[RMDB]
RNA sequence: GGGAACGACUCGAGUAGAGUCGAAAAUACACAGCCAAAUUCUACCAAAUCUACAAAGAACUGGUACCAAUGCCCGCUGUAAUGCUUCCAAAACUUCAAUGAGAAGGGAAGCCUCCCUGACUCAUUCUACAGUGCCAGUAUUAUUCUGAUACUAAAACACCUAUUACCUGUUCGCAGGUAAUAGGUGAAAAGAAACAACAACAACAAC
Reactivity to 2A3 in 0.01 (KOAc 150mM, MgCl2 10mM, bicine 150mM(pH8.5), 24C), signal-to-noise 3, nucleotides 027 to 156: u170a000c030a010c000a050g020c000c020a080a060a060u100u020c020u030a060c020c010a050a090a150u050c050u110a180c120a130a280a040g030a050a050c060u000g010g000u020a020c020c050a040a000u060g020c000c000c060g000c000u000g030u050a030a050u130g020c010u040u040c030c010a030a100a090a110c060u090u060c050a080a090u120g020a040g020a130a020g010g000g000a020a040g040c010c040u020c000c010c000u040g120a220c010u010c030a030u140u040c030u120a070c030a060g020u010g050c020c000a020g060u020a090u220u060a050u140u080c040u040g050a040u010a070c030u060a030a020a120a040
Reactivity to DMS in 0.01 (KOAc 150mM, MgCl2 10mM, bicine 150mM(pH8.5), 24C), signal-to-noise 2, nucleotides 027 to 156: u010a060c040a170c020a090g030c000c060a050a140a120u000u000c070u020a100c020c000a060a090a200u000c020u010a230c100a110a150a080g000a020a060c030u000g030g000u000a070c070c060a050a110u020g020c030c030c030g000c040u000g000u010a090a110u010g010c050u000u000c020c050a050a080a050a170c080u000u000c060a060a030u000g040a070g000a300a040g000g020g000a070a120g000c190c040u000c020c000c000u010g000a220c020u000c010a050u000u010c040u010a120c070a080g040u000g000c050c060a030g000u000a030u040u000a170u000u010c070u000g020a060u000a020c060u010a030a110a070a170